[RMDB]
RNA sequence: GGGAACGACUCGAGUAGAGUCGAAAAGAGUCUCUGUCACUCAGGCUGGAGUGCAGUGGCAUGAUCUCCGCUCGCUGCAACCUCCACCUCACGGGUUUAAGCGAUUCUCAUGCCUCAGCCUCCUGAGGCGCUUUAGUGAGUUCGCUCACUAAAGCGCAAAAGAAACAACAACAACAAC
Reactivity to 2A3 in 0.01 (KOAc 150mM, MgCl2 10mM, bicine 150mM(pH8.5), 24C), signal-to-noise 2, nucleotides 027 to 126: g050a050g000u020c020u010c050u090g160u130c030a060c050u000c010a040g130g040c090u070g060g000a050g020u190g000c010a040g010u020g000g020c020a010u030g050a050u110c150u050c100c040g030c050u050c000g000c010u040g040c030a020a020c020c000u010c030c020a090c020c030u090c020a060c080g020g020g000u000u030u050a020a000g020c020g010a020u140u000c000u000c050a010u040g010c000c000u010c010a020g020c010c050u050c020c010u040g050a060g040
Reactivity to DMS in 0.01 (KOAc 150mM, MgCl2 10mM, bicine 150mM(pH8.5), 24C), signal-to-noise 2, nucleotides 027 to 126: g020a100g000u000c040u000c040u000g020u000c100a090c030u010c020a110g010g010c150u000g020g000a020g020u010g020c000a000g020u000g000g020c000a030u020g000a070u000c110u000c120c100g000c170u010c020g010c010u000g000c150a030a060c100c010u010c030c050a090c070c020u000c100a080c150g010g010g020u000u010u000a150a060g010c020g010a080u010u000c050u000c050a080u020g020c000c000u010c010a050g010c110c030u010c150c020u000g010a040g000
An RNA of 177 nucleotides, treated with 2A3 and DMS and read out base by base. For DMS the reverse transcriptase was MarathonRT. 2A3 adducts were read by reverse transcription with SuperScript II with manganese. For DMS, 2,072 sequencing reads were counted. Values cover nucleotides 27 to 126. It was measured as part of the RMDB library OK2TRN.